Chemical mapping of a 177-nucleotide RNA with 2A3 and DMS. For 2A3, 9,778 sequencing reads were counted. It was measured as part of the RMDB library VIROID. For 2A3 the reverse transcriptase was SuperScript II with manganese.

[RMDB]
RNA sequence: GGGAACGACUCGAGUAGAGUCGAAAACUGAGCCAAACACGGUAAACAAAACCUUUGCUUUUCCCGUAUUCCAUAAUGGACGGGUGUUAUCCUUUUGUAAGAUAACUGCAGGUGCAGGUCCUGAAAUGAUUAUAUCAAGGUUCGCCUUGAUAUAAUCAAAAGAAACAACAACAACAAC
Reactivity to 2A3 in 0.01 (KOAc 150mM, MgCl2 10mM, bicine 150mM(pH8.5), 24C), signal-to-noise 7, nucleotides 027 to 126: c010u020g000a010g030c020c020a070a190a030c090a030c110g040g010u090a130a180a050c060a030a110a020a050c020c010u080u100u110g000c020u120u070u150u070c030c000c000g010u070a260u110u090c010c010a070u090a290a120u300g020g010a000c010g010g000g020u040g010u020u020a020u040c010c000u110u170u130u180g140u160a070a010g000a030u020a030a020c020u060g000c020a030g030g020u050g010c010a000g000g040u010c000c000u020g040a060a070a060u070
Reactivity to DMS in 0.01 (KOAc 150mM, MgCl2 10mM, bicine 150mM(pH8.5), 24C), signal-to-noise 4, nucleotides 027 to 126: c060u000g010a130g010c020c030a060a090a120c150a090c200g010g000u010a030a100a100c160a080a060a110a060c060c040u000u000u000g010c040u000u000u000u000c020c000c000g010u010a100u010u000c020c020a180u010a080a090u010g010g010a040c060g010g010g000u010g010u000u010a030u000c010c030u010u000u010u010g020u010a070a070g000a020u000a020a050c020u000g020c040a080g000g020u000g000c040a020g000g000u000c010c010u000g000a060a100a120u000
Values are in units of 0.01, from 0 to 300, in steps of 10. Conditions: 150 mM KOAc, 10 mM MgCl2 and 150 mM bicine (pH 8.5), 24 C.